[RMDB]
RNA sequence: GGGAACGACUCGAGUAGAGUCGAAAAGGUGGUCGAUCAGAACAUGAACGAUGUCCCCGUCGGCGAAGUGGGCGAAAUUGUCUACCGGGCACCAACAUUGAUGAGCUGCUACUGGAACAACCCGGAGCGUGGAGAGUAAGUUCGCUUACUCUCCACGAAAAGAAACAACAACAACAAC
Reactivity to DMS in 0.01 (KOAc 150mM, MgCl2 10mM, bicine 150mM(pH8.5), 24C), signal-to-noise 5, nucleotides 027 to 126: g040g000u010g010g010u000c030g010a080u020c040a050g000a150a100c120a070u030g000a080a100c080g010a050u010g010u010c000c040c010c080g020u020c050g000g000c030g000a080a090g040u020g020g000g000c030g000a040a070a090u040u020g020u000c040u000a050c040c020g000g020g010c120a090c060c040a050a100c080a070u020u040g010a120u010g000a070g020c040u000g010c030u020a070c040u000g000g020a060a040c150a100a140c020c000c000g000g030a080g000
Reactivity to 2A3 in 0.01 (KOAc 150mM, MgCl2 10mM, bicine 150mM(pH8.5), 24C), signal-to-noise 5, nucleotides 027 to 126: g080g000u090g020g070u030c020g020a080u040c030a040g090a130a060c050a150u110g020a040a020c070g080a040u060g140u160c010c000c000c020g070u050c010g000g000c020g020a070a010g020u080g000g040g000c020g030a060a100a130u170u090g010u000c000u040a070c010c030g010g000g000c000a030c020c020a010a070c040a070u040u220g070a120u090g020a060g020c010u020g000c030u050a040c050u030g010g000a080a040c040a030a040c020c000c000g010g020a050g030